[RMDB]
RNA sequence: GGGAACGACUCGAGUAGAGUCGAAAACGAGGGGACCGUCCCUCGGUAAUGGCGAAUGGGACCCAGAACUCUCUCUAGAUUCCCAGAGUGAAUCGAGAGAAAACUGGCUCUCCCUUAGCCAUCCGAGCUAAUGAAUCUUGUUCGCAAGAUUCAUUAGAAAAGAAACAACAACAACAAC
Reactivity to 2A3 in 0.01 (KOAc 150mM, MgCl2 10mM, bicine 150mM(pH8.5), 24C), signal-to-noise 4, nucleotides 027 to 126: c010g020a050g020g030g010g030a030c030c050g220u200c030c000c010u000c000g010g000u040a050a020u020g010g000c010g010a020a030u030g000g010g000a020c040c000c000a010g010a060a070c010u000c000u000c000u010c020u080a080g000a020u010u010c020c040c120a080g070a040g120u300g020a000a000u000c000g000a000g000a000g000a010a010a000a020c000u000g000g000c000u000c000u010c000c000c020u000u010a000g010c000c000a000u000c000c010g020a010g030
Reactivity to DMS in 0.01 (KOAc 150mM, MgCl2 10mM, bicine 150mM(pH8.5), 24C), signal-to-noise 6, nucleotides 027 to 126: c040g020a070g000g010g000g000a140c250c250g000u000c010c020c000u000c000g010g000u010a040a040u000g000g010c000g000a150a070u000g000g000g010a020c260c000c000a010g010a120a300c210u000c010u000c000u000c000u010a200g000a030u000u000c000c020c230a140g020a140g020u000g010a010a000u000c000g000a020g000a020g000a010a030a060a170c000u000g000g000c010u000c070u000c000c000c000u000u010a300g010c010c010a010u000c010c020g010a070g010
Annotation: Conditions: 150 mM KOAc, 10 mM MgCl2 and 150 mM bicine (pH 8.5), 24 C. Structure probing data (2A3 and DMS) for a 177-nucleotide construct. For 2A3 the reverse transcriptase was SuperScript II with manganese.